[RMDB]
RNA sequence: GGGAACGACUCGAGUAGAGUCGAAAAGUACGUAGAGUGUCGGCAAGCUCUAUAUAUGGACACUUACGAAGGGUUUUGGUUGUUUUGUAUCUCAAGCCGAGUUUGAGUAUUUGAGGAAAAUACGACAUGAAUCCUGUGACGUUCGCGUCACAGGAAACAUACGAACACAGUUCGCUGUGUUCGUAUGAAAAGAAACAACAACAACAAC
Reactivity to DMS in 0.01 (KOAc 150mM, MgCl2 10mM, bicine 150mM(pH8.5), 24C), signal-to-noise 3, nucleotides 027 to 156: g010u000a060c000g030u000a000g000a030g010u000g000u000c060g030g030c060a170a300g010c010u000c030u010a030u010a080u000a020u000g000g020a130c050a040c070u010u000a150c080g010a120a120g000g010g010u010u000u000u020g010g000u000u000g010u020u000u000u010g010u000a090u000c050u000c050a040a110g020c020c050g010a130g020u000u020u000g020a270g010u000a040u000u000u000g000a160g010g010a140a030a020a030u000a030c020g000a130c090a080u000g000a090a120u000c000c000u000g030u000g000a010c010g020u000u000c300g020c000g000u000c000a010c000a000g010g000a000a020a030
Reactivity to 2A3 in 0.01 (KOAc 150mM, MgCl2 10mM, bicine 150mM(pH8.5), 24C), signal-to-noise 3, nucleotides 027 to 156: g040u060a030c050g010u010a000g020a020g140u040g050u090c040g040g090c110a090a010g040c040u000c020u090a080u040a030u030a020u140g090g020a010c020a000c060u070u100a020c100g050a040a070g050g020g010u040u100u110u140g040g010u010u020g010u010u040u000u060g060u030a090u030c040u010c070a070a050g000c030c010g020a030g020u050u100u100g050a040g000u020a060u040u030u040g050a060g040g110a000a020a040a040u070a010c030g050a030c030a060u170g080a100a060u010c000c020u000g000u000g000a010c010g020u050u030c230g020c000g120u000c000a000c000a010g000g040a000a000a000